[RMDB]
RNA sequence: GGGAACGACUCGAGUAGAGUCGAAAAGAUAUGGAGGUUCAUGGGAGCUACUUUAGUUAUACUCAUAAACUCGGAAACGAGUUUAUGAGUAUAACUAAACUAGCGAAGAACAUGGACCUCCUAAGUCCUAAUUAGAUAACUUCGGUUAUCUAAUUAGAAAAGAAACAACAACAACAAC
Reactivity to DMS in 0.01 (KOAc 150mM, MgCl2 10mM, bicine 150mM(pH8.5), 24C), signal-to-noise 3, nucleotides 027 to 126: g000a120u000a290u010g000g000a010g000g020u000u000c010a010u000g000g000g010a130g020c000u000a000c150u010u000u000a000g000u000u000a000u000a010c000u000c000a010u000a000a000a000c000u000c000g000g000a130a110a260c000g020a020g010u000u000u000a000u000g000a010g000u000a000u000a000a010c010u000a000a000a000c080u000a010g000c000g020a070a150g000a130a190c000a010u000g000g000a010c000c000u000c000c000u000a010a060g010u010c030
Chemical mapping of a 177-nucleotide RNA with DMS.